[RMDB]
RNA sequence: GGGAACGACUCGAGUAGAGUCGAAAAGGGGGCGUUACGGAUUCGACAGGCAUUGUCGCGCAUGAACUGCAACUGCUGAGGGAUCAGGAUAAUCAUCCGCAGAUAAAUAUAACUGCUAAAAAUAAUACACAAACUUACGCAAUGGCAGCCUAAACAGCCAAGUCUAUUUGUUCGCAAAUAGACUUGGAAAAGAAACAACAACAACAAC
Reactivity to DMS in 0.01 (KOAc 150mM, MgCl2 10mM, bicine 150mM(pH8.5), 24C), signal-to-noise 1, nucleotides 027 to 156: g000g050g060g040g060c050g010u000u000a070c020g010g020a220u000u000c030g000a070c020a150g050g030c140a120u000u000g020u000c000g040c090g020c070a130u000g010a000a070c070u010g000c000a070a120c070u010g020c010u000g000a110g010g050g000a090u000c010a040g000g000a040u000a010a070u010c030a090u000c010c030g040c020a020g070a180u000a060a110a170u010a080u000a040a040c050u020g050c010u010a020a040a060a080a110u000a050a040u020a050c060a120c090a060a110a090c100u000u000a080c050g060c010a050a080u010g010g030c010a080g000c040c000u000a030a040a070c040a230g000
Reactivity to 2A3 in 0.01 (KOAc 150mM, MgCl2 10mM, bicine 150mM(pH8.5), 24C), signal-to-noise 4, nucleotides 027 to 156: g000g000g000g000g000c020g020u020u070a020c010g030g030a100u070u080c030g020a020c030a040g030g100c070a070u080u050g030u010c020g020c010g000c050a060u080g070a080a050c020u040g030c030a050a040c040u080g000c010u010g020a040g000g000g010a010u020c010a010g030g020a180u050a030a030u040c010a020u010c000c000g020c030a000g030a060u130a130a250a000u180a030u080a130a090c020u040g000c010u110a040a100a000a040a030u170a050a070u160a080c060a010c030a080a180a000c030u150u110a030c030g020c050a000a070u040g020g000c010a010g000c010c000u110a120a100a040c010a010g010